[RMDB]
RNA sequence: GGGAACGACUCGAGUAGAGUCGAAAAGAUAUGGACACUUGUUCUUUUGACGCCCACUCGGAAACGAGUGUGAGCGAUAAGAACUGGUGUCCUAAGUCAAACGACAAUUGCUUCGGCAAUUGUCGAACUCCUAUCAGUCGUUCGCGACUGAUAGGAGAAAAGAAACAACAACAACAAC
Reactivity to DMS in 0.01 (KOAc 150mM, MgCl2 10mM, bicine 150mM(pH8.5), 24C), signal-to-noise 1, nucleotides 027 to 126: g000a060u000a250u010g000g000a020c010a020c000u000u000g010u000u000c000u000u000u000u010g020a250c020g030c040c000c000a050c000u030c000g020g010a020a080a120c020g000a020g010u000g010u000g020a080g030c000g000a110u000a020a020g010a000a000c010u000g020g000u000g000u010c010c000u000a000a090g000u000c030a030a070a280c020g000a010c010a020a000u000u000g000c000u010u010c100g050g000c010a010a020u000u000g010u000c000g000a030a070
Reactivity to 2A3 in 0.01 (KOAc 150mM, MgCl2 10mM, bicine 150mM(pH8.5), 24C), signal-to-noise 1, nucleotides 027 to 126: g020a020u040a030u110g000g000a000c000a000c010u000u040g020u030u000c000u090u300u170u300g150a060c000g010c000c000c000a020c010u000c000g030g000a050a000a020c010g010a000g010u000g020u130g070a100g020c030g030a080u150a300a080g000a000a000c000u000g010g010u000g000u030c010c000u000a010a010g000u030c030a100a050a080c020g000a010c030a010a010u010u000g000c000u090u050c210g170g020c000a000a000u000u000g010u000c000g010a020a000